The data come from the RNA Mapping Database (RMDB), library M2RFPK. An RNA of 207 nucleotides, treated with 2A3 and DMS and read out base by base. The reactions ran in a buffer of 150 mM KOAc, 10 mM MgCl2 and 150 mM bicine (pH 8.5), at 24 C. Reactivities are given for positions 27 through 156. For DMS, 3,773 sequencing reads were counted. The 2A3 profile rests on 1,394 reads.
RNA sequence: GGGAACGACUCGAGUAGAGUCGAAAACGUAAAGGGCGAGCUUUUGUCCGGAAUGGUUCCGCCGUGAUCGGGCCAUGCAAUAGUUGCCAACGACAACUAUACUCCGGUUGCUCAGGCAGCGUAACGCACAAUGGAACAACCUUCGGGUUGUUCCAAAACUAAAACUCCGAUUCGUCGGAGUUUUAGUAAAAGAAACAACAACAACAAC
Reactivity to 2A3 in 0.01 (KOAc 150mM, MgCl2 10mM, bicine 150mM(pH8.5), 24C), signal-to-noise 2, nucleotides 027 to 156: c030g010u030a080a000a140g060g060g000c040g000a070g030c050u080u100u190u200g100u050c020c000g000g010a040a020u040g010g030u250u300c010c040g010c010c060g130u160g040a130u070c020g000g000g000c010c000a020u030g000c020a060a110u030a040g010u010u020g020c040c050a060a040c070g040a060c000a000a000c000u020a010u030a110c070u010c020c000g020g000u010u120g000c030u010c010a020g060g000c000a020g020c010g080u040a050a020c030g000c030a050c020a100a140u130g010g000a000a000c010a000a000c000c020u080u070c220g090g000g000u010u010g010u000u000c000c000a010a000a000
Reactivity to DMS in 0.01 (KOAc 150mM, MgCl2 10mM, bicine 150mM(pH8.5), 24C), signal-to-noise 2, nucleotides 027 to 156: c050g040u000a040a110a150g000g010g040c000g010a070g000c070u000u000u010u020g020u010c040c000g010g020a110a050u000g000g010u000u000c000c010g010c090c090g000u000g010a120u000c050g030g020g050c020c050a090u000g010c070a070a120u000a050g010u000u030g010c000c010a150a180c160g030a140c010a000a030c010u000a040u000a140c110u000c070c070g010g000u000u000g010c000u000c100a150g030g020c020a100g030c030g000u000a060a170c040g000c060a070c100a110a170u000g010g040a030a000c000a020a020c010c020u010u000c270g070g030g020u000u010g010u010u000c000c000a000a000a040